This 207-nucleotide RNA was probed chemically with 2A3 and DMS. The reactions ran in a buffer of 150 mM KOAc, 10 mM MgCl2 and 150 mM bicine (pH 8.5), at 24 C. Source: RMDB library RNAMAK, as collected in RNAgym.
[RMDB]
RNA sequence: GGGAACGACUCGAGUAGAGUCGAAAAGUUAUAAGUUCGCUUAUAACAAAAAGAUAUGGAGAUAGCCAGCUUUUGACGUCGUUAAGUCGGAAACGACUUAAUACGACGAUAAGCUGGUCUAUCUCCUAAGUCAAAAACAGCCAGUUCGCUGGCUGAACUGUAGCUAAAGGUUCGCCUUUAGCUACAGAAAAGAAACAACAACAACAAC
Reactivity to 2A3 in 0.01 (KOAc 150mM, MgCl2 10mM, bicine 150mM(pH8.5), 24C), signal-to-noise 3, nucleotides 027 to 156: g000u000u000a000u010a020a020g020u040u080c140g050c070u000u000a000u010a010a030c050a030a150a020a040a000g040a020u080a030u100g000g000a000g000a000u010a000g000c000c000a020g000c040u070u090u090u130g210a140c020g000u010c000g010u000u020a000a000g000u000c010g010g010a060a100a070c010g000a000c000u000u000a010a010u100a030c000g000a000c010g000a010u010a020a010g000c000u000g000g000u000c000u000a000u000c000u040c000c000u000a010a000g010u000c010a000a000a000a060a100c000a000g020c000c010a010g000u090u110c190g070c090u000g000g000c000u000g010a010a020
Reactivity to DMS in 0.01 (KOAc 150mM, MgCl2 10mM, bicine 150mM(pH8.5), 24C), signal-to-noise 1, nucleotides 027 to 156: g020u010u010a010u010a020a000g030u000u030c300g020c000u000u000a010u010a010a020c000a130a080a130a080a150g000a140u000a290u000g000g020a040g010a020u000a010g000c010c000a060g000c010u000u000u010u000g020a300c000g000u000c010g020u000u000a000a030g050u010c000g040g010a090a090a300c000g000a000c020u000u000a020a030u000a010c070g020a020c000g040a110u000a010a000g000c020u010g030g020u010c010u000a020u000c010u020c000c000u000a000a020g010u020c010a060a130a180a170a120c010a040g040c010c010a040g010u010u010c300g040c050u010g010g010c010u000g000a010a080